[RMDB]
RNA sequence: GGGAACGACUCGAGUAGAGUCGAAAAAAGGUACUAUGUACUUUGUGCCUAGAGCUAAGUCUGUUGUCUCAAGGAUUGGAGACUCCAUCUUUACAGGCUGUACUGGCUCUUGGAACAAGGUCACUCACAAACCACAUGUUCGCAUGUGGUAAAAGAAACAACAACAACAAC
Reactivity to 2A3 in 0.01 (KOAc 150mM, MgCl2 10mM, bicine 150mM(pH8.5), 24C), signal-to-noise 9, nucleotides 027 to 129: a000a000g180g000u090a080c070u080a060u180g030u020a000c000u020u000u000g000u020g040c000c000u010a000g000a000g000c010u090a090a000g000u000c010u020g070u100u070g060u050c020u030c080a070a100g150g040a190u160u290g100g010a090g040a050c050u030c030c020a110u060c040u050u150u070a020c010a010g020g000c010u030g050u110a100c110u070g010g000c000u000c000u000u020g000g000a010a000c000a000a010g010g000u010c030a030c020u090c010a080c060a070a140
Reactivity to DMS in 0.01 (KOAc 150mM, MgCl2 10mM, bicine 150mM(pH8.5), 24C), signal-to-noise 8, nucleotides 027 to 129: a050a040g030g000u050a070c110u040a060u060g030u030a000c010u010u000u000g000u020g030c000c020u020a000g020a010g030c020u000a050a000g020u000c050u000g020u030u030g020u040c060u010c150a070a040g010g000a090u040u090g040g010a140g040a080c110u030c050c030a100u050c030u030u030u010a030c090a000g010g000c000u030g010u050a080c240u000g010g010c000u000c080u000u000g000g000a060a020c030a010a010g000g000u020c020a040c080u010c100a100c120a070a120